[RMDB]
RNA sequence: GGGAACGACUCGAGUAGAGUCGAAAAUCAUCAAUGGUCAGACAACACCAAAAGCGGCUUUCAUGGCGUGAGUAUGACUGCUAACAUAUUGUUCAAUCAAGCGCAGGACAUCUUUCAUAAAGUUAUCCAUCGCGAAAUUGUUCGCAAUUUCGCGAUGAAAAGAAACAACAACAACAAC
Reactivity to DMS in 0.01 (KOAc 150mM, MgCl2 10mM, bicine 150mM(pH8.5), 24C), signal-to-noise 1, nucleotides 027 to 126: u000c100a050u010c150a070a090u020g010g010u020c070a050g010a070c050a050a060c040a040c040c020a030a090a080a100g010c140g000g000c050u030u000u000c040a020u000g040g070c170g040u000g010a030g000u010a070u000g000a090c030u000g000c060u000a050a060c110a060u020a110u000u010g000u020u000c110a090a050u010c050a080a160g010c100g030c130a070g000g000a070c040a030u000c030u010u000u000c170a030u000a020a050a040g000u010u000a100u010c110
Reactivity to 2A3 in 0.01 (KOAc 150mM, MgCl2 10mM, bicine 150mM(pH8.5), 24C), signal-to-noise 1, nucleotides 027 to 126: u050c010a000u020c020a030a110u100g020g000u040c000a000g080a110c020a050a020c000a050c040c040a080a030a050a030g130c080g030g000c040u060u160u130c060a030u090g080g000c030g000u050g010a000g070u070a020u060g030a020c040u060g060c000u060a140a040c030a160u120a120u160u180g010u060u160c030a100a150u090c040a110a000g090c020g020c080a010g070g040a050c020a060u010c030u020u150u060c080a170u120a120a080a030g020u040u060a020u130c000